[RMDB]
An RNA of 177 nucleotides, treated with 2A3 and DMS and read out base by base. Reactivities are given for positions 27 through 126. DMS adducts were read by reverse transcription with MarathonRT. The reactions ran in a buffer of 150 mM KOAc, 10 mM MgCl2 and 150 mM bicine (pH 8.5), at 24 C.

RNA sequence: GGGAACGACUCGAGUAGAGUCGAAAAACUCUCAUCCUUAAUAUCCAACAUAGUGUGACCAAAUUGUUUAACAGUCAGCAUUAAGGAUUUAGUGAAACUGGCUUUAAUUUGGUUGUAGCCUUGCAGCACUGCCACCUAAUUUCGAUUAGGUGGCAGUAAAAGAAACAACAACAACAAC
Reactivity to 2A3 in 0.01 (KOAc 150mM, MgCl2 10mM, bicine 150mM(pH8.5), 24C), signal-to-noise 4, nucleotides 027 to 126: a000c050u020c000u020c030a060u030c000c000u080u130a130a000u060a100u080c110c110a040a020c020a220u160a140g140u090g090u140g160a000c000c000a000a010a030u050u070g150u110u240u150a180a060c010a010g000u000c020a000g000c010a020u080u020a060a020g130g090a100u070u030u120a070g010u040g080a100a020a110c000u000g010g000c000u020u050u170a030a050u010u020u000g000g020u000u040g010u000a020g010c020c020u040u180g000c070a050g040c030
Reactivity to DMS in 0.01 (KOAc 150mM, MgCl2 10mM, bicine 150mM(pH8.5), 24C), signal-to-noise 2, nucleotides 027 to 126: a140c040u020c010u040c020a090u000c020c000u060u010a060a060u000a050u000c040c060a110a070c210a090u000a050g010u040g010u000g010a070c000c020a010a000a030u000u000g050u020u030u030a050a040c160a020g000u010c000a000g000c060a010u000u000a030a000g010g000a020u000u050u000a050g030u010g000a080a100a160c000u000g030g030c030u000u030u020a020a020u020u000u000g000g000u030u000g010u010a120g000c030c040u000u020g010c150a060g000c110